Structure probing data (DMS and 2A3) for a 177-nucleotide construct. 2A3 adducts were read by reverse transcription with SuperScript II with manganese. The reactions ran in a buffer of 150 mM KOAc, 10 mM MgCl2 and 150 mM bicine (pH 8.5), at 24 C. The DMS profile rests on 6,559 reads. High 2A3 reactivity points to a flexible backbone, as in loops and unpaired stretches.

RNA sequence: GGGAACGACUCGAGUAGAGUCGAAAAGAUAUGGAGUAUUCGAGCGAUAAGCUGGUGUCGGAAACGACACUCAGCUUUUGACGCUUCGAAUACUCCUAAGUCAAAGGGUCUUGUUCGCAAGACCCAACUAUUAUCGUAGCUUCGGCUACGAUAAUAGAAAAGAAACAACAACAACAAC
Reactivity to DMS in 0.01 (KOAc 150mM, MgCl2 10mM, bicine 150mM(pH8.5), 24C), signal-to-noise 4, nucleotides 027 to 126: g000a030u000a300u000g000g000a020g010u000a010u000u000c000g010a030g030c000g010a120u010a020a010g020c000u010g020g010u000g000u000c010g010g010a070a070a130c000g010a010c000a010c000u010c010a000g010c000u000u000u000u000g020a190c150g010c010u000u000c020g000a000a000u000a000c000u000c000c000u000a000a050g000u010c030a120a140a130g010g020g010u000c000u000u000g000u000u010c280g010c010a010a010g000a020c000c000c000a010a030
Reactivity to 2A3 in 0.01 (KOAc 150mM, MgCl2 10mM, bicine 150mM(pH8.5), 24C), signal-to-noise 3, nucleotides 027 to 126: g020a000u040a020u120g000g010a000g000u000a000u010u010c000g000a000g000c070g080a130u030a300a010g010c000u000g000g020u000g010u000c000g000g040a040a020a030c020g000a000c000a000c010u140c010a000g010c000u020u000u010u030g050a040c080g010c000u000u020c000g000a000a000u000a000c000u020c000c000u000a000a010g010u010c050a100a070a100g010g000g000u010c000u000u030g020u070u150c300g030c110a010a010g000a000c000c000c010a000a010